An RNA of 177 nucleotides, treated with DMS and 2A3 and read out base by base. DMS adducts were read by reverse transcription with MarathonRT. Values cover nucleotides 27 to 126. It was measured as part of the RMDB libraries RFM100 and RFMREP.
[RMDB]
RNA sequence: GGGAACGACUCGAGUAGAGUCGAAAAGUUGGCACAGGCACUGCAUUGUUACUGGCAGCAAACACAUAAAGCGCGACCUUCAACGAAGAAGGCUGCACUUCCCGAUAGAACGGGACCUGGACAAAGGUACCCGUUGUAAGUUCGCUUACAACGGGUAAAAAGAAACAACAACAACAAC
Reactivity to DMS in 0.01 (KOAc 150mM, MgCl2 10mM, bicine 150mM(pH8.5), 24C), signal-to-noise 7, nucleotides 027 to 126: g030u010u000g030g010c040a080c040a040g000g010c100a050c060u000g010c070a070u010u020g000u020u000a070c070u000g000g010c060a040g020c060a050a090a080c130a100c120a110u020a080a070a030g010c050g010c020g000a070c030c000u000u000c030a110a140c270g020a170a080g000a030a020g020g020c020u000g010c020a050c020u000u010c030c010c000g000a160u020a070g020a100a130c050g010g010g000a070c050c010u000g000g010a110c160a060a080a040g010g020
Reactivity to 2A3 in 0.01 (KOAc 150mM, MgCl2 10mM, bicine 150mM(pH8.5), 24C), signal-to-noise 6, nucleotides 027 to 126: g070u090u090g040g020c020a020c020a110g030g020c010a010c050u040g020c030a060u050u160g060u080u070a100c040u040g050g000c020a000g010c020a040a090a010c060a010c020a060u180a100a120a020g040c020g010c000g050a200c010c000u000u000c050a180a140c080g040a090a110g000a010a000g040g010c020u030g010c010a010c020u080u050c020c000c000g020a050u070a120g110a070a020c030g010g000g010a010c000c000u060g010g020a050c060a060a080a000g020g030